Structure probing data (2A3) for a 177-nucleotide construct.
[RMDB]
RNA sequence: GGGAACGACUCGAGUAGAGUCGAAAACAAAUUGUCUUGCGUAAUUCUAAUGGUGCUUGCAUUUGGAACGCUGCUGCAUAUAUGAAACUCUCGGAUGCACUUAAACGACAGAUUCGCAUUGCAUGCCGCUCCAUGGCCGUUUCGACGGCCAUGGAGCAAAAGAAACAACAACAACAAC
Reactivity to 2A3 in 0.01 (KOAc 150mM, MgCl2 10mM, bicine 150mM(pH8.5), 24C), signal-to-noise 1, nucleotides 027 to 126: c000a000a020a070u060u170g000u030c030u050u000g020c070g060u100a060a190u120u010c000u050a090a020u040g180g000u260g150c000u050u140g000c000a150u000u000u110g020g000a020a000c020g000c020u120g000c000u000g000c050a000u010a000u000a000u190g120a070a040a030c070u070c000u000c030g040g000a030u000g000c000a000c100u100u120a070a100a000c200g000a000c040a020g160a040u040u020c020g000c110a000u000u040g000c090a100u090g120c120c020

For 2A3 the reverse transcriptase was SuperScript II with manganese. Reactivities are given for positions 27 through 126.